[RMDB]
RNA sequence: GGGAACGACUCGAGUAGAGUCGAAAAAACCGCCAGGACGGCGGCAGCCAGUACAACAGUCGCCAGUCGAAUUUUCACGGAAUGAACCAGCCGCAUAACGGCAACGUGGGCGGCAGCAACGGCUGGACUAUAAGCAAAACUUCGGUUUUGCUUAUAGAAAAGAAACAACAACAACAAC
Reactivity to 2A3 in 0.01 (KOAc 150mM, MgCl2 10mM, bicine 150mM(pH8.5), 24C), signal-to-noise 4, nucleotides 027 to 126: a000a000c030c000g000c040c010a090g110g130a060c050g000g000c010g020g000c010a000g080c030c020a050g060u160a100c050a130a020c020a140g060u020c020g030c050c010a000g030u030c040g060a100a120u080u050u100u140c070a080c070g090g060a090a110u110g020a090a110c020c000a030g020c010c000g040c020a030u090a240a050c020g040g000c050a030a030c020g020u040g000g080g000c020g030g000c010a000g030c010a050a030c010g030g000c010u010g010g000a000
Reactivity to DMS in 0.01 (KOAc 150mM, MgCl2 10mM, bicine 150mM(pH8.5), 24C), signal-to-noise 6, nucleotides 027 to 126: a090a080c010c010g020c020c020a130g000g000a170c140g010g030c010g020g000c050a050g000c040c040a140g020u010a090c120a080a090c090a080g020u000c060g000c010c010a090g010u010c020g020a100a090u000u000u000u010c050a080c090g000g000a080a160u000g000a080a110c120c060a080g020c010c020g000c040a070u010a090a070c030g010g010c180a040a050c040g020u000g010g010g010c000g010g010c020a060g010c100a080a100c030g010g000c000u000g000g000a280